[RMDB]
RNA sequence: GGGAACGACUCGAGUAGAGUCGAAAAGAAGGACAUAACGCGAAGAAGCAGAGAGAAGACUGCAGUGACGCGACUCACUAGACGUCAACGACGGCAAGAGAGAGCCGAAGGAGACGAUCCUUAGGAGACCGCAUCAUAGGUUCGCCUAUGAUGCGGUAAAAGAAACAACAACAACAAC
Reactivity to 2A3 in 0.01 (KOAc 150mM, MgCl2 10mM, bicine 150mM(pH8.5), 24C), signal-to-noise 3, nucleotides 027 to 126: g070a020a050g130g030a000c040a120u190a150a050c020g000c010g030a140a040g070a100a010g040c030a020g010a000g000a000g060a140a100g070a040c020u000g000c030a060g010u040g100a000c000g010c000g030a020c010u000c020a100c010u010a010g000a050c030g000u000c000a030a010c000g000a020c010g000g010c040a150a000g070a050g010a010g020a010g240c000c000g020a000a020g020g000a030g000a000c030g080a140u070c020c030u120u100a000g020g000a010g000
Reactivity to DMS in 0.01 (KOAc 150mM, MgCl2 10mM, bicine 150mM(pH8.5), 24C), signal-to-noise 2, nucleotides 027 to 126: g010a050a090g000g010a090c080a090u010a130a130c090g050c000g000a120a180g000a190a080g040c040a030g000a090g060a210g010a150a100g000a120c000u000g000c000a060g070u000g010a120c080g000c020g070a220c010u000c000a110c020u000a100g020a010c000g030u000c000a040a300c000g000a300c000g000g000c000a030a120g000a150g000a030g030a120g000c000c000g020a020a190g000g000a300g000a010c010g000a040u000c000c000u040u000a070g000g000a020g000

An RNA of 177 nucleotides, treated with 2A3 and DMS and read out base by base.
It was measured as part of the RMDB library OK1LIB.
For 2A3 the reverse transcriptase was SuperScript II with manganese.
Reactivities are given for positions 27 through 126.